An RNA of 207 nucleotides, treated with 2A3 and read out base by base. For 2A3, 699 sequencing reads were counted. Conditions: 150 mM KOAc, 10 mM MgCl2 and 150 mM bicine (pH 8.5), 24 C.

RNA sequence: GGGAACGACUCGAGUAGAGUCGAAAAAUCCUCAGGUUCAUAAGCGUGAUGAUUGGGUGUUCAUGCUCCAUGCAUGACAUGUGCCUCCUUUGAACCUUGUUACGACCUUGGCACAUUACCCAUUUGAAAAAGACGUUCGCGUUCGCGCGAACGUCAACUGGUCCUAAGAGUUCGCUCUUAGGACCAGAAAAGAAACAACAACAACAAC
Reactivity to 2A3 in 0.01 (KOAc 150mM, MgCl2 10mM, bicine 150mM(pH8.5), 24C), signal-to-noise 1, nucleotides 027 to 156: a000u000c000c000u010c010a000g000g030u000u010c000a010u020a190a080g050c080g090u080g140a090u030g060a030u080u060g020g010g000u040g050u090u030c020a000u000g000c030u050c160c110a120u250g000c000a000u000g020a030c020a050u050g000u000g010c000c000u010c000c010u000u000u030g000a000a000c000c020u000u210g060u030u140a040c070g000a060c050c130u090u080g000g000c010a000c010a030u020u060a040c000c000c050a030u030u050u110g070a080a040a040a060a060g020a000c000g010u000u000c000g000c010g010u040u010c190g010c000g000c000g050a000a000c000g000u000c000a000a000